RNA sequence: GGGAACGACUCGAGUAGAGUCGAAAAGCAAGCCCCGCACAGACUGGAUGAGCAGCCGAUUAAAUGAUUGCUCAGAGUGGAUGAACCCGUUAACCCGGUAUUGUAAACAGAAACUCGAUUGAGGUACCAAACUAAGGCGGAAAAGAGUUGGGGGCACAUGCCAAAUAGAUUUCGAUCUAUUUGGCAUAAAAGAAACAACAACAACAAC
Reactivity to 2A3 in 0.01 (KOAc 150mM, MgCl2 10mM, bicine 150mM(pH8.5), 24C), signal-to-noise 1, nucleotides 027 to 156: g080c060a150a000g030c020c010c040c100g160c050a120c030a060g130a100c070u050g100g050a110u050g020a100g060c000a000g060c000c030g030a040u110u080a010a060a040u200g020a080u040u000g000c000u000c000a000g010a000g090u050g010g000a120u070g100a040a040c010c000c000g040u050u090a080a090c110c000c000g020g020u100a060u010u250g050u050a130a000a000c000a020g120a070a070a000c000u010c010g190a180u180u140g000a020g060g040u140a130c030c040a020a080a070c050u080a060a000g060g010c080g050g110a040a060a000a000g120a010g020u000u150g020g040g000g020g000c000a000c000
Reactivity to DMS in 0.01 (KOAc 150mM, MgCl2 10mM, bicine 150mM(pH8.5), 24C), signal-to-noise 1, nucleotides 027 to 156: g060c010a070a150g000c000c000c000c040g040c070a160c070a070g020a070c010u000g000g000a230u030g010a080g030c010a040g040c020c010g000a220u000u000a080a080a140u000g000a010u000u000g010c000u000c010a070g000a160g040u000g000g040a250u000g030a040a120c080c000c010g020u000u000a070a080c030c050c070g020g020u010a030u000u000g020u000a050a050a180c070a140g000a150a020a080c020u000c030g010a140u000u030g010a160g010g000u020a110c020c030a060a000a130c110u000a050a100g050g000c030g000g000a120a050a060a100g000a070g030u000u010g000g010g000g040g000c030a060c120